[RMDB]
An RNA of 177 nucleotides, treated with 2A3 and DMS and read out base by base.
For DMS, 1,181 sequencing reads were counted.
Values cover nucleotides 27 to 126.
The 2A3 profile rests on 1,571 reads.

RNA sequence: GGGAACGACUCGAGUAGAGUCGAAAAGCUUGCUCUGCUAUAAGAGGAACCGACUUACUAGAGUUGAAGCUUCUACCGUUGUCUGUGGUGGAAAACGUACGUUUUAUAUCACAGCAAAUGGCGGUAUCAUUACCAACUUCUUCGGAAGUUGGUAAUGAAAAGAAACAACAACAACAAC
Reactivity to 2A3 in 0.01 (KOAc 150mM, MgCl2 10mM, bicine 150mM(pH8.5), 24C), signal-to-noise 2, nucleotides 027 to 126: g000c080u040u130g040c000u010c020u020g000c090u200a110u040a300a000g010a000g070g020a000a000c020c010g030a020c020u000u010a010c010u030a010g010a000g020u000u090g080a100a030g040c000u170u070c000u040a010c030c000g000u040u060g070u060c010u010g010u010g000g000u020g040g000a010a010a000a010c040g120u230a020c050g000u080u000u000u010a010u010a000u000c000a000c010a020g000c000a040a000a140u190g050g000c000g030g000u030a060u030
Reactivity to DMS in 0.01 (KOAc 150mM, MgCl2 10mM, bicine 150mM(pH8.5), 24C), signal-to-noise 1, nucleotides 027 to 126: g010c220u000u000g000c000u000c000u000g020c100u020a100u010a140a060g000a030g020g000a080a070c090c010g000a030c000u010u000a000c030u000a070g010a010g020u000u000g020a100a190g000c050u000u000c090u000a020c000c010g030u000u000g030u010c000u000g030u000g000g000u000g000g000a070a030a020a000c000g000u000a090c240g000u000u000u000u000a130u000a020u000c000a000c000a020g000c080a120a090a040u020g000g000c000g000g000u000a050u000